RNA sequence: GGGAACGACUCGAGUAGAGUCGAAAACGCACUGGCUAUGGCCAAGUUGCAUUUUUAAAACCCGUCGAUUUGAGUGGAUUCGAAAAGCUUGAAGACAUACCUGGCAAGGUCGUUGUUUUUGAGAGAAAGAUUUGCGCCGUAUAUCCUGUUGAGGGAAAUGCCAUUUAUAUUUCGAUAUAAAUGGCAUAAAAGAAACAACAACAACAAC
Reactivity to DMS in 0.01 (KOAc 150mM, MgCl2 10mM, bicine 150mM(pH8.5), 24C), signal-to-noise 3, nucleotides 027 to 156: c030g020c030a030c040u000g010g010c010u000a090u010g070g000c000c000a010a120g030u010u000g040c010a020u020u000u000u000u030a070a100a170a240c020c010c000g030u000c040g010a130u000u010u000g010a100g010u000g000g010a120u000u000c060g000a100a110a090a200g000c030u000u000g030a060a050g010a050c030a080u000a050c020c010u010g000g030c130a160a120g010g020u000c060g010u000u000g010u000u000u000u000u000g000a120g010a160g010a100a080a080g010a080u010u010u000g020c020g010c040c020g000u000a060u000a060u000c030c010u000g030u000u000g010a160g010g010g010a040a090
Reactivity to 2A3 in 0.01 (KOAc 150mM, MgCl2 10mM, bicine 150mM(pH8.5), 24C), signal-to-noise 5, nucleotides 027 to 156: c030g010c000a010c010u010g010g020c010u080a210u300g230g000c020c010a070a050g070u120u070g010c010a020u040u000u010u040u190a040a090a020a050c010c010c030g030u060c040g070a130u050u060u150g020a040g030u060g040g070a040u100u040c080g070a090a020a020a060g010c010u040u050g010a030a010g020a020c010a020u080a040c010c030u040g100g030c100a070a050g030g020u040c050g040u050u030g020u000u060u010u010u030g060a070g000a000g020a040a110a040g020a060u070u050u100g040c060g000c020c000g050u080a060u060a020u190c020c020u080g020u090u100g050a040g010g030g000a050a120